[RMDB]
RNA sequence: GGGAACGACUCGAGUAGAGUCGAAAAGAUAUGGAUAUGUAGGCUAGCUCCUCGGAAACGAGAGAGCUUGGACCCUACUGUAUCCUAAGUCAAAACAGAUCAGACAUGUUCGCAUGUCUGAUCUGAAGACUAAGAGGAACUUCGGUUCCUCUUAGUCAAAAGAAACAACAACAACAAC
Reactivity to DMS in 0.01 (KOAc 150mM, MgCl2 10mM, bicine 150mM(pH8.5), 24C), signal-to-noise 5, nucleotides 027 to 126: g000a050u000a300u010g000g010a010u000a020u010g010u010a010g010g010c030u010a010g010c000u000c000c000u010c000g010g000a080a080a180c000g000a010g010a150g010a010g010c010u000u010g020g000a100c300c000c000u000a000c000u010g050u000a000u000c000c000u010a030a170g000u010c030a090a070a120a210c010a010g000a010u000c000a000g000a010c000a000u000g000u000u010c220g020c010a000u000g020u000c000u000g000a000u010c000u000g000a030a060
Reactivity to 2A3 in 0.01 (KOAc 150mM, MgCl2 10mM, bicine 150mM(pH8.5), 24C), signal-to-noise 3, nucleotides 027 to 126: g020a010u080a020u130g000g010a000u000a010u060g000u010a010g020g030c040u010a010g000c000u000c000c000u000c010g000g030a070a050a030c020g000a000g020a010g000a010g050c000u000u010g010g060a070c030c000c000u010a020c060u060g030u010a000u000c000c000u020a080a030g060u040c040a000a020a080a150c010a000g010a010u010c000a000g000a020c010a010u010g050u120u120c300g000c190a000u010g000u010c000u010g000a010u010c000u000g000a010a010